RNA sequence: GGGAACGACUCGAGUAGAGUCGAAAAGGUGGAACUUCGGUUCCACCAAAAAUCCCGCGGAAAGCUAACGACUUGAAUCCCGGAGCGAGACCGGGGCGGGAGAAACAUAGUGCGUUCGCGCACUAUGCUUCUUUUGGUAGUUCGCUACCAAAAGAAGAAAAGAAACAACAACAACAAC
Reactivity to DMS in 0.01 (KOAc 150mM, MgCl2 10mM, bicine 150mM(pH8.5), 24C), signal-to-noise 2, nucleotides 027 to 126: g000g020u010g000g000a010a000c000u000u010c190g030g030u000u000c000c000a000c010c000a000a020a060a150a100u000c010c000c000g000c020g010g000a020a010a010g000c000u000a130a090c240g010a140c000u000u000g000a000a010u000c010c000c000g010g000a030g000c000g000a100g010a050c000c000g000g020g000g010c000g000g000g000a020g000a110a080a290c010a010u000a000g010u000g010c000g020u000u020c220g030c030g010c010a010c000u000a000u000g000
Reactivity to 2A3 in 0.01 (KOAc 150mM, MgCl2 10mM, bicine 150mM(pH8.5), 24C), signal-to-noise 1, nucleotides 027 to 126: g000g000u000g000g000a000a010c000u030u050c190g030g000u000u000c000c000a000c000c000a010a010a000a000a000u020c000c000c000g020c000g010g000a050a030a000g000c010u030a010a000c030g020a010c010u020u020g000a020a000u000c030c000c000g020g020a000g010c020g000a000g000a000c000c010g010g010g010g000c000g010g050g010a060g090a000a050a000c000a000u010a010g000u000g020c030g030u030u050c230g000c020g000c090a000c000u000a000u010g020